[RMDB]
RNA sequence: GGGAACGACUCGAGUAGAGUCGAAAAGAGUGGAUGUUCCGCCUCCCCAGGGUCCCGAGUGAGGCUUAUCCCGGGGAACUCGGCCCAGUCCCGAGAUAGCCGCGUCCGAGGUUCCCAUUCAAAGGGGUCGCAGUGACUUUCGAGUCACUGAAAAGAAACAACAACAACAAC
Reactivity to DMS in 0.01 (KOAc 150mM, MgCl2 10mM, bicine 150mM(pH8.5), 24C), signal-to-noise 9, nucleotides 027 to 129: g020a060g030u020g000g000a090u040g030u040u020c020c040g000c050c040u020c020c020c010c040a110g020g020g020u020c030c000c020g010a120g030u030g000a100g020g010c050u010u010a000u000c000c000c000g000g000g000g000a030a030c050u020c040g030g000c000c000c000a180g000u010c030c010c010g020a040g000a000u000a000g000c020c010g020c100g000u020c010c010g020a090g000g020u000u020c000c000c020a120u050u060c160a030a080a060g000g000g010g010u010c030g030
Reactivity to 2A3 in 0.01 (KOAc 150mM, MgCl2 10mM, bicine 150mM(pH8.5), 24C), signal-to-noise 9, nucleotides 027 to 129: g160a020g020u110g020g040a110u110g100u220u060c020c010g020c000c010u030c010c000c000c010a020g040g000g020u040c020c010c020g020a040g040u170g050a060g010g000c000u030u080a010u030c000c000c000g010g000g000g010a010a020c010u000c010g010g000c000c010c000a010g020u020c000c000c000g010a010g000a010u010a010g010c020c030g040c040g050u000c020c010g010a030g040g000u030u020c010c000c010a030u160u120c080a060a080a040g040g000g000g000u000c000g000